[RMDB]
Notes
Structure probing data (2A3) for a 207-nucleotide construct. The data come from the RNA Mapping Database (RMDB), library RNAMAK. The reactions ran in a buffer of 150 mM KOAc, 10 mM MgCl2 and 150 mM bicine (pH 8.5), at 24 C.
RNA sequence: GGGAACGACUCGAGUAGAGUCGAAAAGUGUGACUUUCGAGUCACACAAAAAAACCUUUGUGAAUGCGAUGAGCUACCCACCCAUACCAGUCCCAUUGGGACUGGGAUGGAGGCGAGCAUUCACUCUGGUAAAAAUAGGGAACUUCGGUUCCCUAAAGCCACAAGACAUGUUCGCAUGUCUUGUGGCAAAAGAAACAACAACAACAAC
Reactivity to 2A3 in 0.01 (KOAc 150mM, MgCl2 10mM, bicine 150mM(pH8.5), 24C), signal-to-noise 1, nucleotides 027 to 156: g000u000g000u000g010a020c020u090u150u210c300g020a030g010u000c010a000c000a010c000a030a030a030a030a030a020a030c000c010u000u010u010g020u000g000a000a000u050g020c090g300a300u140g120a120g170c030u180a240c040c000c000a070c000c000c000a000u000a000c020c020a000g000u000c000c020c140a250u240u290g000g000g000a000c010u010g000g000g000a000u000g000g000a000g000g050c030g010a020g000c000a000u030u000c000a000c000u020c020u000g000g000u040a160a160a000a000a000u120a000g040g000g000a000a000c000u020u030c150g160g000u000u000c000c000c000u080a000a090a000